[RMDB]
RNA sequence: GGGAACGACUCGAGUAGAGUCGAAAAGGGUUUGGAUUACAUCAAUAGUAACAUGAGCAGAAGUAAACAGAACAAGAAGUACUGCGGUUAUUCUAGUUCAAAGUUCACACUAUCGCAAUAAAGGGAACUGCAACUAGGAAUUCGUUCCUAGUUGCAGAAAAGAAACAACAACAACAAC
Reactivity to DMS in 0.01 (KOAc 150mM, MgCl2 10mM, bicine 150mM(pH8.5), 24C), signal-to-noise 2, nucleotides 027 to 126: g000g000g000u010u020u010g000g000a100u010u010a050c040a080u000c100a060a090u010a060g010u000a010a050c060a080u010g000a030g050c010a030g000a030a110g010u000a050a100a040c070a100g010a060a030c040a110a090g000a080a050g000u010a030c030u000g030c100g030g040u000u010a080u000u000c020u000a080g020u000u000c030a030a060a050g000u000u000c040a090c070a140c020u000a040u000c050g000c080a030a050u010a010a040a100g000g000g000a050a140
Reactivity to 2A3 in 0.01 (KOAc 150mM, MgCl2 10mM, bicine 150mM(pH8.5), 24C), signal-to-noise 1, nucleotides 027 to 126: g070g000g020u050u090u050g010g000a070u080u010a040c010a060u090c060a070a130u070a130g060u070a020a020c040a080u080g030a020g040c040a010g000a150a010g060u090a050a050a000c030a040g040a020a010c000a040a030g070a030a000g020u020a000c030u030g040c030g000g040u000u020a020u050u000c000u000a040g000u000u030c000a080a100a030g030u050u060c080a010c010a010c040u060a100u190c020g020c000a010a000u080a100a090a060g030g020g010a020a030

The data come from the RNA Mapping Database (RMDB), library M2PK90.
An RNA of 177 nucleotides, treated with DMS and 2A3 and read out base by base.
For DMS the reverse transcriptase was MarathonRT.
The DMS profile rests on 1,150 reads.
For 2A3, 996 sequencing reads were counted.
The RNA was probed in 150 mM KOAc, 10 mM MgCl2 and 150 mM bicine (pH 8.5) at 24 C.
2A3 adducts were read by reverse transcription with SuperScript II with manganese.